[RMDB]
An RNA of 177 nucleotides, treated with 2A3 and DMS and read out base by base. The DMS profile rests on 3,692 reads.
RNA sequence: GGGAACGACUCGAGUAGAGUCGAAAACUUUGAUGUUCCCUAGCCAGGGAUUGUCUUCCUCAAGUUUCUUGAUUUUCUUCUUCGCCUUCCGGAGCUCCUUCUCGAGAUCCUCAGCUUUUUUCCUUGACCCUUAAUAAAAGUUCGCUUUUAUUAAGGGAAAAGAAACAACAACAACAAC
Reactivity to 2A3 in 0.01 (KOAc 150mM, MgCl2 10mM, bicine 150mM(pH8.5), 24C), signal-to-noise 3, nucleotides 027 to 126: c060u130u060u190g070a070u080g030u010u020c000c000c010u010a040g040c050c070a020g000g010g010a040u020u110g050u030c000u040u030c030c010u020c060a090a090g060u020u100u070c020u060u090g050a110u050u060u100u010c010u090u000c010u050u060c020g010c030c010u050u030c040c010g030g010a040g030c020u020c020c000u060u070c030u000c000g060a060g000a050u040c000c010u030c020a040g030c030u110u110u030u020u070u050c010c000u010u000g030a030
Reactivity to DMS in 0.01 (KOAc 150mM, MgCl2 10mM, bicine 150mM(pH8.5), 24C), signal-to-noise 3, nucleotides 027 to 126: c100u000u010u000g020a090u000g010u000u000c010c000c000u010a170g010c150c130a090g000g000g000a050u000u000g020u010c020u000u000c030c020u010c160a090a170g000u000u000u000c030u010u010g000a130u000u010u000u010c030u000u000c030u010u000c050g000c040c030u000u010c040c050g000g000a190g010c050u000c020c030u000u000c020u000c020g010a130g000a060u000c020c020u010c080a090g000c050u000u000u000u010u000u000c030c010u000u000g000a300